[RMDB]
RNA sequence: GGGAACGACUCGAGUAGAGUCGAAAACUUGGGUGCCUGUCCAACCGUCUAAAAAACGGUUGUUAGCAAGGGCCGGGUAAGACCGGUGCCAGCCGCCGCGGUAAUACCGGCGGCUCGAGUGGUGGCCUACGUAACCACAAUUCGUUGUGGUUACGUAAAAAGAAACAACAACAACAAC
Reactivity to DMS in 0.01 (KOAc 150mM, MgCl2 10mM, bicine 150mM(pH8.5), 24C), signal-to-noise 4, nucleotides 027 to 126: c030u020u010g000g040g010u010g000c040c000u010g010u000c180c000a000a000c000c000g010u000c010u020a000a040a130a100a170a010c000g000g000u000u000g010u000u020a100g020c110a080a100g010g000g000c000c010g020g010g010u000a100a120g000a140c010c000g000g000u010g020c030c030a060g000c000c000g000c010c000g010c150g000g010u010a100a090u060a240c050c000g000g010c010g010g000c000u000c010g000a040g000u010g000g020u010g000g010c010c020
Reactivity to 2A3 in 0.01 (KOAc 150mM, MgCl2 10mM, bicine 150mM(pH8.5), 24C), signal-to-noise 4, nucleotides 027 to 126: c010u030u030g140g000g010u060g100c000c000u040g060u080c000c000a000a000c000c000g020u010c020u060a070a050a030a010a000a000c010g000g000u000u000g010u020u050a010g000c030a100a130g020g000g000c000c000g010g010g010u050a100a040g040a050c010c000g040g050u100g180c020c010a010g000c000c000g000c000c000g040c120g020g020u050a070a030u050a140c000c000g000g000c000g000g000c000u000c000g030a020g000u060g010g060u070g060g020c000c000